[RMDB]
RNA sequence: GGGAACGACUCGAGUAGAGUCGAAAAUCCUUCCUUUUCGAAGGAAGGACAGUGCACAGUCUUCGCAUCUGUGAAUCACACAACAGCCGUGUCUAUGCGAGCUUUUAAUCAAGUUCGCUUGAUUAAAAGUCUAAGAGGAUUUCGAUCCUCUUAGACUAAAAGAAACAACAACAACAAC
Reactivity to 2A3 in 0.01 (KOAc 150mM, MgCl2 10mM, bicine 150mM(pH8.5), 24C), signal-to-noise 9, nucleotides 027 to 126: u010c000c000u010u010c010c000u070u060u020u080c230g130a010a000g000g000a000a000g010g000a010c020a020g040u040g010c010a010c000a010g020u010c050u090u040c110g000c020a030u020c010u010g010u010g050a080a100u130c030a010c000a000c010a110a170c020a060g090c020c020g100u070g050u070c080u110a040u060g010c000g010a020g030c030u040u050u020u050a010a010u020c010a000a010g010u020u060c100g080c120u000u000g000a000u000u020a020a050a060
Reactivity to DMS in 0.01 (KOAc 150mM, MgCl2 10mM, bicine 150mM(pH8.5), 24C), signal-to-noise 9, nucleotides 027 to 126: u000c000c000u000u000c000c000u000u000u000u010c160g010a020a010g010g000a020a010g000g000a010c090a050g010u000g010c020a020c020a020g010u000c080u000u000c040g010c020a050u000c010u000g010u000g000a110a060u000c160a180c030a050c050a080a080c140a120g000c020c020g010u010g010u010c140u000a030u000g010c000g000a040g010c300u000u000u000u000a020a020u000c040a010a010g000u000u010c200g010c000u000u000g000a020u000u000a010a020a040